[RMDB]
RNA sequence: GGGAACGACUCGAGUAGAGUCGAAAAGGAAUGUUCUAGAACCUGGUUGUGUGAUCUCAUUCCAACAAUCUUUUUCUAUGCGUCCGAUUAAAGCGAGUGUUCUGUUAAUCGCAUAGCUGAAAUUUCACAUUAUGCUCACGUUCGCGUGAGCAUAAUGAAAAGAAACAACAACAACAAC
Reactivity to 2A3 in 0.01 (KOAc 150mM, MgCl2 10mM, bicine 150mM(pH8.5), 24C), signal-to-noise 2, nucleotides 027 to 126: g050g000a120a050u120g040u150u140c030u040a060g000a050a030c010c050u030g000g040u020u040g050u020g070u080g000a060u000c060u040c150a040u140u020c010c030a000a020c000a040a050u060c000u020u060u000u010u000c010u020a030u050g000c010g020u000c050c070g070a070u070u130a160a090a010g070c060g020a050g110u060g030u180u000c050u020g100u200u090a060a030u060c040g000c050a030u080a050g020c050u030g080a080a070a050u070u140u100c090a040
Reactivity to DMS in 0.01 (KOAc 150mM, MgCl2 10mM, bicine 150mM(pH8.5), 24C), signal-to-noise 3, nucleotides 027 to 126: g000g010a050a020u010g000u010u000c120u000a050g010a050a050c110c020u000g010g010u000u000g020u000g010u000g000a060u010c210u000c140a070u000u010c020c040a090a050c080a030a040u000c030u000u000u000u010u000c010u000a020u000g000c010g010u010c080c050g020a130u000u000a030a090a080g010c030g010a090g020u000g000u000u010c080u010g000u000u000a070a060u000c070g010c040a030u010a080g000c090u030g010a030a080a110u000u010u000c060a160

Structure probing data (2A3 and DMS) for a 177-nucleotide construct. Conditions: 150 mM KOAc, 10 mM MgCl2 and 150 mM bicine (pH 8.5), 24 C. Reactivities are given for positions 27 through 126. The 2A3 profile rests on 1,340 reads.